[RMDB]
An RNA of 177 nucleotides, treated with 2A3 and DMS and read out base by base. The 2A3 profile rests on 1,379 reads. 2A3 adducts were read by reverse transcription with SuperScript II with manganese.

RNA sequence: GGGAACGACUCGAGUAGAGUCGAAAAUAGACAGCCGGGAGGUGAGCUUAGAAGCAGCUACCCUCUAAGAAAAGCGUAACAGCUUACCGGCCGAGGUUCGAGGCGCCCAAAAUGAUCGGGGCUCAAGACACUUGCGAGAAUUCGUUCUCGCAAGUGUAAAAGAAACAACAACAACAAC
Reactivity to 2A3 in 0.01 (KOAc 150mM, MgCl2 10mM, bicine 150mM(pH8.5), 24C), signal-to-noise 2, nucleotides 027 to 126: u120a010g090a020c050a030g010c000c000g000g030g000a000g040g040u070g070a030g000c010u110u060a040g010a230a060g080c030a000g000c000u150a220c010c010c000u000c020u010a050a030g020a060a080a000a000g000c020g010u040a150a000c020a020g000c000u000u000a000c000c020g000g000c020c020g040a040g090g140u070u100c030g010a040g010g000c080g190c000c000c030a040a090a000a030u290g030a040u070c050g030g000g000g040c040u040c070a020a030g050
Reactivity to DMS in 0.01 (KOAc 150mM, MgCl2 10mM, bicine 150mM(pH8.5), 24C), signal-to-noise 2, nucleotides 027 to 126: u020a060g030a190c130a120g000c000c000g000g010g000a020g000g000u010g000a040g000c000u040u000a080g080a120a190g000c170a020g030c000u000a030c030c000c000u030c030u050a070a210g000a040a060a020a000g020c020g000u020a160a120c250a150g000c010u000u000a140c010c010g000g000c000c010g000a030g030g010u010u030c080g050a040g010g000c120g000c000c000c010a120a040a140a080u090g010a100u010c070g000g020g000g000c000u000c060a140a170g020
Values cover nucleotides 27 to 126. Source: RMDB library RFM100, as collected in RNAgym.